[RMDB]
RNA sequence: GGGAACGACUCGAGUAGAGUCGAAAAUUGCUUCACUUAUUUACGGAAACUUUGCUUCACCUAUCCACGGAAGCUUUGUUUCACCUAUCUACGAAUGUGGAUAUGGAAUGUGGAUAUGGAACAUAGAACCUUCCACAUGUUUCGACAUGUGGAAGGUAAAAGAAACAACAACAACAAC
Reactivity to 2A3 in 0.01 (KOAc 150mM, MgCl2 10mM, bicine 150mM(pH8.5), 24C), signal-to-noise 3, nucleotides 027 to 126: u100u060g060c040u090u080c050a070c170u030u080a010u060u070u060a060c040g010g000a000a030a030c000u050u030u040g030c030u070u070c060a150c020c020u100a080u090c060c010a030c060g030g000a000a000g000c000u010u010u000g000u000u010u000c010a010c000c000u010a020u000c000u010a020c040g190a300a090u300g010u000g000g020a010u020a020u220g040g070a150a090u200g000u020g000g000a000u000a030u100g000g000a050a010c000a020u050a040g150a070
Reactivity to DMS in 0.01 (KOAc 150mM, MgCl2 10mM, bicine 150mM(pH8.5), 24C), signal-to-noise 2, nucleotides 027 to 126: u010u000g040c050u000u000c010a080c100u010u000a040u010u010u000a020c070g020g020a030a020a050c000u000u000u000g000c000u000u000c060a080c130c100u020a130u030c120c110a100c260g010g000a040a020g010c020u010u000u000g010u030u020u000c000a300c020c010u000a000u000c000u000a020c010g000a090a080u000g040u000g010g000a000u010a010u000g010g000a070a060u020g010u000g000g030a030u000a020u020g020g000a040a030c060a030u000a070g000a160